RNA sequence: GGGAACGACUCGAGUAGAGUCGAAAAUCGCACGAAAUGAUCGGGGCAGUCGUUCGUGUUCGAGAGCAGAGAGGCUGUGGAGUUUCGGGCUCCUUCUCCUUCUUGAUCCUCCAGUCUAAUCUAUCGACCCCUCCAUAUACUUCGGUAUAUGGAGGGGAAAAGAAACAACAACAACAAC
Reactivity to DMS in 0.01 (KOAc 150mM, MgCl2 10mM, bicine 150mM(pH8.5), 24C), signal-to-noise 2, nucleotides 027 to 126: u010c080g000c050a040c010g010a040a050a070u000g030a030u000c120g020g010g000g000c060a090g020u010c030g010u000u010c010g010u000g000u000u010c110g000a070g020a080g020c070a050g000a080g020a090g020g000c090u000g020u000g010g010a030g000u010u000u000c150g010g010g000c060u010c040c040u000u010c010u000c030c020u010u000c030u000u000g000a070u000c060c010u000c040c020a100g010u000c040u000a100a120u000c090u000a100u000c130g010a290
Reactivity to 2A3 in 0.01 (KOAc 150mM, MgCl2 10mM, bicine 150mM(pH8.5), 24C), signal-to-noise 2, nucleotides 027 to 126: u080c000g000c010a000c010g010a010a050a140u170g030a070u050c070g020g050g010g000c020a010g000u010c000g020u030u020c010g000u030g020u100u120c080g020a050g000a010g090c050a020g080a010g000a010g070g040c030u050g050u080g050g000a020g010u030u080u140c150g020g130g000c010u040c030c020u060u030c010u030c040c000u060u030c010u040u030g040a060u040c020c000u000c010c000a000g060u000c030u080a160a090u060c050u060a140u140c030g090a140